[RMDB]
RNA sequence: GGGAACGACUCGAGUAGAGUCGAAAAUCUAGGGUUCCGCAUGUCAAUUGACAUGGACUGGUCCGAGAGAAAACACAUACGCGUAAAUAGAAGCGCGUAUGCAUACGGAGGGAAAAAAGCCCGGGAGAAUGGGAUUAUUAGUUCGCUAAUAAUCCAAGAUCUGGUUUUGAUUCGUCAAAACCAGAUCAAAAGAAACAACAACAACAAC
Reactivity to 2A3 in 0.01 (KOAc 150mM, MgCl2 10mM, bicine 150mM(pH8.5), 24C), signal-to-noise 1, nucleotides 027 to 156: u000c020u070a050g000g000g020u010u000c000c000g080c010a000u000g000u040c030a170a300u260u300g000a010c000a020u000g000g010a080c020u070g010g020u000c010c030g000a000g000a000g000a000a100a010a000c040a020c000a010u000a010c010g010c000g020u110a050a220a100u270a230g170a280a060g020c010g030c000g000u000a030u000g010c000a020u050a090c000g030g020a060g000g000g000a090a250a000a080a150a080g000c000c000c080g000g120g020a120g090a040a070u210g040g050g000a000u000u000a000u000u000a000g000u020u070c160g000c140u000a000a000u000a010a000u030c000c000a000a010
An RNA of 207 nucleotides, treated with 2A3 and read out base by base. For 2A3, 426 sequencing reads were counted. It was measured as part of the RMDB library M2RFPK. Values cover nucleotides 27 to 156.